The data come from the RNA Mapping Database (RMDB), library OK1LIB. Chemical mapping of a 177-nucleotide RNA with 2A3 and DMS. High 2A3 reactivity points to a flexible backbone, as in loops and unpaired stretches. DMS adducts were read by reverse transcription with MarathonRT. The RNA was probed in 150 mM KOAc, 10 mM MgCl2 and 150 mM bicine (pH 8.5) at 24 C.
RNA sequence: GGGAACGACUCGAGUAGAGUCGAAAAAAAUUAAUGAGAAAAUUCUUCAAGGUGAAGAAUAAUGGAACUAGCUUUACUGUAAGCGGAGAGAAUGUCUCUGCAAGCCAGUUGCGAAUCUCAGCACAGGCCUAACGAAGGUAUUCGUACCUUCGUUAGGAAAAGAAACAACAACAACAAC
Reactivity to 2A3 in 0.01 (KOAc 150mM, MgCl2 10mM, bicine 150mM(pH8.5), 24C), signal-to-noise 5, nucleotides 027 to 126: a000a000a000u300u210a070a050u100g020a040g030a050a100a060a070u030u000c010u010u010c040a080a090g300g020u250g100a000a010g010a000a000u100a060a110u090g070g050a060a020c030u040a060g030c000u070u120u220a080c040u100g050u140a110a010g000c020g000g000a000g000a000g040a150a210u160g240u050c000u000c000u010g000c000a010a010g070c020c000a000g000u010u030g000c000g020a090a060u000c010u000c010a010g080c040a050c060a070g190g000
Reactivity to DMS in 0.01 (KOAc 150mM, MgCl2 10mM, bicine 150mM(pH8.5), 24C), signal-to-noise 3, nucleotides 027 to 126: a010a070a050u030u040a110a070u000g010a030g000a020a080a100a020u000u010c000u000u000c000a120a120g010g010u020g030a010a020g010a000a000u000a080a030u040g000g010a050a050c050u020a070g020c020u000u000u050a120c220u090g040u000a120a250g010c000g000g030a010g000a020g000a150a100u070g000u010c000u000c010u000g000c000a020a090g000c110c020a000g000u000u000g010c010g000a090a090u000c000u000c000a040g000c130a070c240a110g010g020